[RMDB]
RNA sequence: GGGAACGACUCGAGUAGAGUCGAAAAGACGCCUGUGUGGCGAAUCGAGCAAUGGCAUAAGCCGCAAUAGAAGAUGAGAUGGAAGCGGCAAGAUAGAAUGCUCGCAACGAGAUCCAUCUCACAGAGAGGCUAAAUAGGCUUUCGAGCCUAUUUAGCCAAAAGAAACAACAACAACAAC
Reactivity to 2A3 in 0.01 (KOAc 150mM, MgCl2 10mM, bicine 150mM(pH8.5), 24C), signal-to-noise 2, nucleotides 027 to 126: g080a010c010g020c000c000u100g030u050g140u200g210g000c020g000a010a070u060c080g000a020g000c010a070a200u060g130g000c000a020u150a120a020g000c000c050g030c070a150a000u160a060g110a050a000g300a300u050g000a000g000a000u000g000g000a120a040g000c000g060g000c020a000a000g060a000u150a170g200a090a110u050g000c080u050c060g070c020a030a160c070g090a020g000a000u000c000c000a000u030c000u000c020a000c010a000g260a010g000a040
Reactivity to DMS in 0.01 (KOAc 150mM, MgCl2 10mM, bicine 150mM(pH8.5), 24C), signal-to-noise 2, nucleotides 027 to 126: g000a120c130g030c010c010u010g000u010g030u080g000g000c000g000a180a040u060c030g000a110g010c050a010a000u030g040g030c050a090u020a130a060g010c020c000g000c000a130a070u100a110g000a300a050g000a120u000g020a020g000a000u020g000g000a020a140g020c010g050g000c000a080a240g000a300u000a030g000a140a070u000g000c000u000c040g000c120a020a120c190g000a160g050a080u000c000c000a000u000c000u000c000a000c060a090g000a170g030a090
An RNA of 177 nucleotides, treated with 2A3 and DMS and read out base by base. The reactions ran in a buffer of 150 mM KOAc, 10 mM MgCl2 and 150 mM bicine (pH 8.5), at 24 C.